[RMDB]
RNA sequence: GGGAACGACUCGAGUAGAGUCGAAAAUGUCCCUGACCUGGGUAGAGUGGCAUCUGGUUGGUGAUGCCCAUCUCAUAUCAGCCAGGGACAAAGCAACUCCUUGUUCAUCCCAGCUUGGCUUUUGAUCCACCAUGUUCAUCUUCGGAUGAACAUGGUGAAAAGAAACAACAACAACAAC
Reactivity to 2A3 in 0.01 (KOAc 150mM, MgCl2 10mM, bicine 150mM(pH8.5), 24C), signal-to-noise 5, nucleotides 027 to 126: u030g000u010c000c000c000u000g050a060c010c030u080g030g000g070u130a050g010a010g010u050g010g000c000a000u000c030u100g260g020u230u120g040g070u140g020a000u000g010c020c000c000a050u050c000u000c010a080u110a050u160c000a000g020c030c010a000g000g000g000a000c000a020a020a000g040c020a040a050c020u070c020c000u030u050g020u020u080c040a070u050c000c010c010a020g020c030u040u040g030g020c040u080u140u050u170g080a040u060c020
Reactivity to DMS in 0.01 (KOAc 150mM, MgCl2 10mM, bicine 150mM(pH8.5), 24C), signal-to-noise 2, nucleotides 027 to 126: u000g000u010c000c000c000u000g010a060c130c100u010g000g010g050u020a070g000a020g000u000g000g000c010a010u000c000u000g010g000u060u020g000g050u000g010a010u000g000c090c040c160a010u000c000u000c000a100u000a050u030c030a070g010c130c000a000g010g010g000a010c000a000a130a160g000c150a050a080c100u000c030c070u020u010g000u000u010c040a130u000c000c010c010a130g010c130u010u000g000g000c150u010u000u000u000g000a190u000c060

About this RNA
Chemical mapping of a 177-nucleotide RNA with 2A3 and DMS. Source: RMDB libraries RFM100 and RFMREP, as collected in RNAgym. The RNA was probed in 150 mM KOAc, 10 mM MgCl2 and 150 mM bicine (pH 8.5) at 24 C. Reactivities are rounded to 0.1 and cut off at 0 and 3. For DMS the reverse transcriptase was MarathonRT.